[RMDB]
RNA sequence: GGGAACGACUCGAGUAGAGUCGAAAAUUAAAGCGGUCUCUGAGGUAGGUGAGAGAGAGAGAGAGAGCUUACCGCUUUUCAUAGUGGCUCUCUGUCUGACUCUUAAGCUCGAGUCGUUCCCAAAAAACUUAAAUCCUGUAUUCGUACAGGAUUUAAGAAAAGAAACAACAACAACAAC
Reactivity to DMS in 0.01 (KOAc 150mM, MgCl2 10mM, bicine 150mM(pH8.5), 24C), signal-to-noise 1, nucleotides 027 to 126: u000u010a030a060a110g050c050g010g000u000c030u000c020u000g000a090g030g030u000a040g030g020u020g000a030g020a040g000a040g010a040g000a080g000a000g020a060g000a020g000c120u010u010a100c070c100g000c050u000u000u020u010c210a070u020a050g020u020g020g000c010u000c020u010c010u000g010u000c030u010g010a010c000u000c000u000u010a050a140g010c000u000c000g010a000g000u000c000g000u000u000c000c000c000a000a020a050a070a010a020
An RNA of 177 nucleotides, treated with DMS and read out base by base. For DMS, 1,188 sequencing reads were counted.